This 177-nucleotide RNA was probed chemically with 2A3 and DMS. For 2A3 the reverse transcriptase was SuperScript II with manganese. DMS (dimethyl sulfate) methylates the pairing face of unpaired adenines and cytosines. The DMS profile rests on 14,087 reads.

RNA sequence: GGGAACGACUCGAGUAGAGUCGAAAAGCUCACGCUGAAGAGUGGUCAUGGUAAGUGCAAUUUGCGCAGAUCCCGGAUACACAACUUUGGCUUUCACAGCCGCCCCUGUGUUUAUAGCAUGCCUCCGAAUAGUAUGCUGUUUCGACAGCAUACUAUUAAAAGAAACAACAACAACAAC
Reactivity to 2A3 in 0.01 (KOAc 150mM, MgCl2 10mM, bicine 150mM(pH8.5), 24C), signal-to-noise 3, nucleotides 027 to 126: g000c010u010c040a050c060g020c030u050g010a040a000g020a020g030u040g000g020u050c030a070u090g040g010u080a080a090g010u030g000c030a110a280u100u140u270g020c020g000c010a020g010a130u090c020c010c000g000g000a050u240a090c020a000c000a050a300c040u090u040u040g000g000c000u050u110u130c090a070c040a030g010c040c030g030c020c010c000c000u000g010u000g030u060u150u080a170u070a020g010c030a030u070g030c000c010u050c020c020g020
Reactivity to DMS in 0.01 (KOAc 150mM, MgCl2 10mM, bicine 150mM(pH8.5), 24C), signal-to-noise 9, nucleotides 027 to 126: g010c020u000c070a110c240g010c030u000g000a040a050g010a280g020u000g000g000u000c040a070u000g010g010u010a130a140g010u000g010c030a120a180u000u000u010g020c050g010c030a070g000a120u010c090c010c050g010g010a060u000a060c040a020c040a060a100c070u000u000u010g010g010c010u000u010u000c150a060c150a050g010c030c040g010c060c030c010c050u010g020u000g010u000u000u000a090u000a110g000c030a050u010g000c030c010u000c030c050g010